[RMDB]
RNA sequence: GGGAACGACUCGAGUAGAGUCGAAAACAAAUCUUCGAGUUCAAUGGUUCUAUAACGAUCAGCCAUUGAUGGAGUCUAACUGGAUCUCAACCAGCAACGACUUUGGAUGUGUCUCGUUGAGAAUUGCCGAUUAUCUGUCAUUCGUGACAGAUAAUCGAAAAGAAACAACAACAACAAC
Reactivity to DMS in 0.01 (KOAc 150mM, MgCl2 10mM, bicine 150mM(pH8.5), 24C), signal-to-noise 6, nucleotides 027 to 126: c080a080a090a130u000c030u010u010c030g010a080g010u000u000c020a030a040u000g000g010u000u000c120u000a100u000a070a100c210g010a100u010c230a090g010c020c000a010u000u000g000a110u010g000g000a010g000u000c020u000a300a100c010u000g000g000a080u010c180u010c290a110a170c000c000a000g000c030a030a100c300g000a030c020u000u000u000g010g020a090u000g010u000g000u010c020u000c020g000u000u000g000a020g000a090a110u000u000g000c290
Reactivity to 2A3 in 0.01 (KOAc 150mM, MgCl2 10mM, bicine 150mM(pH8.5), 24C), signal-to-noise 6, nucleotides 027 to 126: c010a030a080a050u050c020u040u030c030g040a050g060u000u050c020a030a010u040g020g040u100u000c060u140a230u110a300a100c120g050a130u120c060a020g000c020c000a010u000u020g010a030u050g010g010a010g000u000c010u030a040a030c010u040g040g060a130u080c050u030c160a070a180c010c000a010g040c040a040a030c070g030a030c000u020u030u050g160g020a140u110g120u060g050u150c010u010c020g010u010u030g030a020g060a100a200u160u150g050c040
An RNA of 177 nucleotides, treated with DMS and 2A3 and read out base by base.
The RNA was probed in 150 mM KOAc, 10 mM MgCl2 and 150 mM bicine (pH 8.5) at 24 C.
The data come from the RNA Mapping Database (RMDB), library OK2TRN.
For DMS the reverse transcriptase was MarathonRT.
For DMS, 5,802 sequencing reads were counted.
The 2A3 profile rests on 8,203 reads.